[RMDB]
RNA sequence: GGGAACGACUCGAGUAGAGUCGAAAACGGAACUCCAGUCAUUUGAGGGACGAAUCCGCCCCCGGGCGCUCCCCUCGGACUUCCUCCAGGAGGGUUCACAUCCCCAACCCGCGGGCCGGCUACUCUUAGGCUCAUGCCUUCGGGCAUGAGAAAAGAAACAACAACAACAAC
Reactivity to DMS in 0.01 (KOAc 150mM, MgCl2 10mM, bicine 150mM(pH8.5), 24C), signal-to-noise 9, nucleotides 027 to 129: c200g000g000a040a060c000u020c040c090a100g000u020c080a150u000u050u050g030a050g040g010g020a110c110g010a070a120u030c220c030g060c020c010c000c100c180g020g000g020c050g040c170u010c040c000c010c020u010c000g030g000a060c080u010u030c050c030u000c000c120a150g000g000a100g000g000g000u040u010c040a090c030a130u000c020c000c000c100a100a100c020c030c020g020c090g110g020g030c040c110g040g020c090u030a070c150u040c060u050u010a090g020g000
Reactivity to 2A3 in 0.01 (KOAc 150mM, MgCl2 10mM, bicine 150mM(pH8.5), 24C), signal-to-noise 6, nucleotides 027 to 129: c040g020g010a000a000c000u020c020c020a040g100u060c060a200u040u090u300g040a040g000g000g000a030c070g050a060a040u080c060c010g000c000c000c000c000c010g050g000g010c030g030c040u060c010c000c000c000u000c000g020g000a010c010u060u020c010c020u090c020c000a000g070g050a040g050g050g000u060u090c030a030c000a160u100c000c000c010c000a010a040c010c000c000g000c000g010g020g010c010c040g030g000c010u060a080c010u050c020u070u100a080g070g060
The record gives the reactivity of an RNA of 170 nucleotides to DMS and 2A3. For DMS, 21,235 sequencing reads were counted. Values cover nucleotides 27 to 129.